[RMDB]
RNA sequence: GGGAACGACUCGAGUAGAGUCGAAAAAGCGGCAUCACUACGGUGAUGCCGCAAGCGGACUUGGAUCCGUUGGAAUGUGACCUUAAUGGUUGAACCGUAGAACGUCCUAUGCUACGGCAUAGGACGACGUAUGAUCUCAAUUCGUUGAGAUCAUACGAAAAGAAACAACAACAACAAC
Reactivity to DMS in 0.01 (KOAc 150mM, MgCl2 10mM, bicine 150mM(pH8.5), 24C), signal-to-noise 6, nucleotides 027 to 126: a080g010c020g020g010c000a010u000c010a140c010u000a030c050g010g010u010g010a010u000g010c000c010g030c010a000a010g000c000g000g000a010c020u010u020g030g010a150u000c000c000g010u010u000g010g010a100a080u010g010u010g000a030c010c000u010u020a110a100u010g020g010u000u010g020a100a050c010c000g000u000a020g020a220a210c030g000u000c000c000u000a000u000g010c000u000a110c220g020g010c000a000u010a000g000g000a000c000g010a010
Reactivity to 2A3 in 0.01 (KOAc 150mM, MgCl2 10mM, bicine 150mM(pH8.5), 24C), signal-to-noise 9, nucleotides 027 to 126: a000g010c000g010g000c010a000u000c000a010c060u020a010c050g010g000u010g000a000u000g010c000c000g000c000a000a000g000c000g000g020a010c040u210u300g140g040a130u140c010c000g010u020u050g070g100a180a120u250g060u180g100a020c010c000u110u210a200a110u300g040g010u030u070g050a060a040c000c000g000u020a020g020a080a030c020g000u000c000c000u000a000u000g000c000u020a050c290g090g000c000a000u000a000g000g010a000c000g000a000
Record summary:
This 177-nucleotide RNA was probed chemically with DMS and 2A3. 2A3 adducts were read by reverse transcription with SuperScript II with manganese. The reactions ran in a buffer of 150 mM KOAc, 10 mM MgCl2 and 150 mM bicine (pH 8.5), at 24 C. As a SHAPE reagent, 2A3 marks flexible, mostly unpaired nucleotides at the ribose 2'-OH.